This 177-nucleotide RNA was probed chemically with 2A3 and DMS. For DMS the reverse transcriptase was MarathonRT.

[RMDB]
RNA sequence: GGGAACGACUCGAGUAGAGUCGAAAAUUCUAAUUAUGGAGAAGAUCAAGCUUUGAAAUGGCCCGUUUACACAUUUUGAUACAACCGUAGACGGCGUCUCGUUUCAAAGACCGUGUGGUUGUCUAUCGUACGCUUAGAUAUUCGUAUCUAAGCGUACAAAAGAAACAACAACAACAAC
Reactivity to 2A3 in 0.01 (KOAc 150mM, MgCl2 10mM, bicine 150mM(pH8.5), 24C), signal-to-noise 5, nucleotides 027 to 126: u060u030c020u050a060a060u190u180a100u300g090g030a090g020a100a080g010a060u090c060a100a030g050c000u040u020u000g010a010a010a000u030g020g000c020c000c020g000u000u010u010a010c060a000c010a070u040u080u120u300g120a090u140a160c080a080a040c050c070g000u010a000g000a010c000g010g060c080g060u000c030u030c060g020u000u010u010c010a010a010a000g020a020c030c040g090u140g020u050g070g000u000u000g030u010c030u020a060u080c040
Reactivity to DMS in 0.01 (KOAc 150mM, MgCl2 10mM, bicine 150mM(pH8.5), 24C), signal-to-noise 3, nucleotides 027 to 126: u010u010c010u010a050a110u010u010a070u010g000g000a030g000a070a090g000a100u020c090a160a090g000c000u000u010u000g000a000a000a010u010g000g000c010c040c000g040u000u010u000a000c000a120c210a120u020u010u040u040g010a180u020a070c190a060a090c260c190g000u000a010g000a010c010g000g010c220g030u000c030u020c070g010u000u000u000c000a010a010a000g000a060c030c120g020u020g020u010g000g000u000u000g000u010c020u010a150u000c260